[RMDB]
RNA sequence: GGGAACGACUCGAGUAGAGUCGAAAAUUGGCAGCAGCAAUCCUUGCGUCCGAUCGAUGAUCAAACGGACAGGCAUCGAUGCGGAUCCUAUGAAGAUCUCGCAGCGCUUCCGCGAACAUCCGCACGCCCAUGCGAGGCUGUUCGCAGCCUCGCAUGGAAAAGAAACAACAACAACAAC
Reactivity to DMS in 0.01 (KOAc 150mM, MgCl2 10mM, bicine 150mM(pH8.5), 24C), signal-to-noise 1, nucleotides 027 to 126: u000u000g000g000c000a000g050c020a000g000c010a110a080u000c030c030u000u010g060c100g020u000c030c000g000a060u010c040g000a010u000g000a000u000c100a040a050a110c080g000g000a030c120a060g000g090c040a040u020c040g020a000u010g000c070g010g000a000u000c010c010u010a150u000g010a210a060g000a040u030c000u020c010g020c000a030g000c030g000c000u060u000c080c030g000c050g040a050a090c040a030u000c040c000g000c140a140c130g020c040
Reactivity to 2A3 in 0.01 (KOAc 150mM, MgCl2 10mM, bicine 150mM(pH8.5), 24C), signal-to-noise 4, nucleotides 027 to 126: u120u070g010g000c030a020g000c020a000g030c010a030a050u030c000c030u040u080g010c040g000u000c010c010g020a070u080c000g010a030u010g040a110u110c090a090a190a100c070g040g060a010c030a040g050g000c000a010u040c030g060a050u080g140c000g000g000a000u000c000c000u150a170u250g060a080a050g000a030u070c130u110c090g030c040a010g000c020g000c020u070u000c010c000g010c000g020a030a020c000a040u020c020c000g010c020a020c030g050c010